The data come from the RNA Mapping Database (RMDB), library RFMREP. The record gives the reactivity of an RNA of 177 nucleotides to DMS and 2A3. For DMS the reverse transcriptase was MarathonRT. The 2A3 profile rests on 1,002 reads. The RNA was probed in 150 mM KOAc, 10 mM MgCl2 and 150 mM bicine (pH 8.5) at 24 C.

RNA sequence: GGGAACGACUCGAGUAGAGUCGAAAAGGCGAAUUGUAGUCUAUAGAGGCGUGAUCAGUGUGGGCGCUUGGGGCAAGUUCCUUGGAAGAGGACAGCAUGGAGGGUGAUACUCCCGUUCAUCCCUGAGGCAGUAAUAGGAGUUCGCUCCUAUUACUGCAAAAGAAACAACAACAACAAC
Reactivity to DMS in 0.01 (KOAc 150mM, MgCl2 10mM, bicine 150mM(pH8.5), 24C), signal-to-noise 2, nucleotides 027 to 126: g010g020c020g000a060a080u010u000g010u010a100g030u010c050u000a160u020a110g000a090g010g020c040g040u010g010a110u020c090a020g020u000g010u010g000g010g000c030g030c040u000u010g000g000g000g020c100a050a080g000u010u010c020c000u010u000g000g050a090a140g000a070g020g000a030c070a060g000c120a110u000g000g000a030g000g000g010u000g010a070u000a060c110u000c020c010c030g020u000u000c040a120u000c010c000c030u010g000a110g000
Reactivity to 2A3 in 0.01 (KOAc 150mM, MgCl2 10mM, bicine 150mM(pH8.5), 24C), signal-to-noise 1, nucleotides 027 to 126: g030g000c030g010a040a030u090u110g060u070a080g020u060c040u020a160u030a160g170a020g040g030c020g000u050g020a050u040c050a060g110u050g000u020g110g010g000c080g020c030u020u060g010g000g000g030c020a060a070g020u060u030c020c000u000u090g050g020a070a060g000a040g010g000a000c000a020g020c090a050u120g030g040a040g040g000g010u000g010a010u050a100c020u000c000c000c000g020u000u000c020a120u060c000c000c070u040g010a120g200